[RMDB]
The data come from the RNA Mapping Database (RMDB), library M2RFPK.
An RNA of 207 nucleotides, treated with 2A3 and DMS and read out base by base.
Values cover nucleotides 27 to 156.
RNA sequence: GGGAACGACUCGAGUAGAGUCGAAAAGCUUCCUCUUGGCGCGGAGGUUUAACUGCGCUCGCUCCCCAUAUCGGUGUGGGCGCACCGGAUUUACAUAUUAAAGUCCUUUAGGGAGCGGAAAGGGACAAAAACUUGCACGUGUUCGCACGUGCAAGAACAGAUGAUACUAGUUCGCUAGUAUCAUCUGAAAAGAAACAACAACAACAAC
Reactivity to 2A3 in 0.01 (KOAc 150mM, MgCl2 10mM, bicine 150mM(pH8.5), 24C), signal-to-noise 7, nucleotides 027 to 156: g030c040u140u060c010c000u000c000u000u020g020g010c000g010c010g010g010a010g020g030u090u130u090a040a040c060u080g000c000g000c000u000c000g000c000u020c000c010c000c020a050u100a090u210c020g000g000u000g000u020g060g140g010c120g000c020a000c000c010g020g010a020u080u130u200a100c060a050u180a070u120u240a070a010a020g010u010c000c000u010u030u070a030g010g010g000a010g000c030g000g010a070a020a010g020g000g010a030c080a030a110a020a010a010c000u000u000g000c000a000c000g000u010g040u070u090c190g010c100a000c000g000u000g000c000a000a000g000a000a000
Reactivity to DMS in 0.01 (KOAc 150mM, MgCl2 10mM, bicine 150mM(pH8.5), 24C), signal-to-noise 3, nucleotides 027 to 156: g010c110u000u010c000c000u000c030u000u010g020g020c020g090c020g020g000a130g040g010u000u000u000a060a160c020u020g010c010g010c000u000c000g000c010u000c030c010c010c060a130u000a100u010c060g050g030u000g040u000g030g030g030c140g000c020a010c010c010g010g010a130u000u000u000a170c120a160u010a140u010u010a090a070a150g010u000c010c010u010u000u000a040g030g000g000a040g030c000g010g000a040a040a050g000g020g010a090c040a090a060a090a130a110c000u000u010g000c000a010c000g050u000g010u010u000c270g020c030a010c000g020u000g000c000a000a000g000a050a150

The RNA was probed in 150 mM KOAc, 10 mM MgCl2 and 150 mM bicine (pH 8.5) at 24 C.